Structure probing data (2A3) for a 207-nucleotide construct. The reactions ran in a buffer of 150 mM KOAc, 10 mM MgCl2 and 150 mM bicine (pH 8.5), at 24 C.
RNA sequence: GGGAACGACUCGAGUAGAGUCGAAAACGUCCCCGUCGUACAGAAUGGUAACAAAUCUCUCCAAAUAUCUGAGCUUGGGUAUACGGGGAAACCCAACCCCUUGGGAAGAUUGGGUAUAUGGCUAAAUUACAUCGAUUGUACUUCGGUACAAUCGAAACAUUGCCAAAAUCUUCGGAUUUUGGCAAUGAAAAGAAACAACAACAACAAC
Reactivity to 2A3 in 0.01 (KOAc 150mM, MgCl2 10mM, bicine 150mM(pH8.5), 24C), signal-to-noise 2, nucleotides 027 to 156: c070g060u020c110c000c000c000g060u090c030g030u050a040c000a070g090a240a190u140g080g030u070a190a000c040a040a120a110u020c040u010c000u000c040c060a110a170a100u180a100u080c040u060g010a000g100c070u040u020g020g020g000u050a010u000a030c040g000g000g000g000a060a030a000c000c000c000a000a010c030c000c010c000u000u030g060g000g020a080a020g000a090u010u040g000g090g000u080a100u010a050u130g060g000c020u030a110a050a090u200u120a080c030a120u020c000g000a010u000u000g000u000a000c000u000u030c170g050g000u000a000c000a000a000u000c000g000a000a000a000